[RMDB]
RNA sequence: GGGAACGACUCGAGUAGAGUCGAAAAGCAGCCUUGAAGCGUGUUGGGUGUAACAACGUUAGACUCAAUGCCAUUUUGAGUGAUACUACUGGUACAUUGGUUGCUUCCAACUAUGCCAGCCCAGGUACUGAGAUUGGUGUCAUCUUUGGAACUGGAAAAUAUAGUCCUCAUUCGUGAGGACUAUAUUAAAAGAAACAACAACAACAAC
Reactivity to DMS in 0.01 (KOAc 150mM, MgCl2 10mM, bicine 150mM(pH8.5), 24C), signal-to-noise 5, nucleotides 027 to 156: g010c040a070g010c030c020u010u010g010a060a070g020c090g020u010g030u010u000g010g020g050u010g020u000a030a040c010a100a130c180g020u000u010a080g010a080c010u000c010a020a030u000g020c040c080a170u000u000u000u000g010a070g010u000g010a140u000a090c030u000a120c030u000g010g020u000a070c140a100u010u010g020g020u000u010g000c080u000u000c040c020a040a070c060u010a090u000g010c000c010a060g010c010c020c030a090g010g020u000a080c050u000g010a080g010a120u000u000g020g010u000g010u000c030a080u000c040u000u010u000g020g010a090a150c050u000g030g000a130a080
Reactivity to 2A3 in 0.01 (KOAc 150mM, MgCl2 10mM, bicine 150mM(pH8.5), 24C), signal-to-noise 6, nucleotides 027 to 156: g030c020a000g030c020c010u080u140g100a100a020g060c060g070u010g040u020u020g010g020g010u060g050u070a060a030c250a090a060c120g010u020u030a050g040a030c010u010c000a010a010u060g060c020c030a120u100u090u030u090g100a050g010u080g050a100u040a120c030u020a020c030u080g040g020u030a040c030a120u050u050g010g000u010u050g020c000u070u010c030c000a050a020c050u090a040u180g040c020c020a010g040c040c010c010a010g030g020u060a030c020u060g050a030g020a100u130u120g030g020u060g050u110c020a040u040c030u080u070u050g040g010a050a040c010u030g000g000a040a150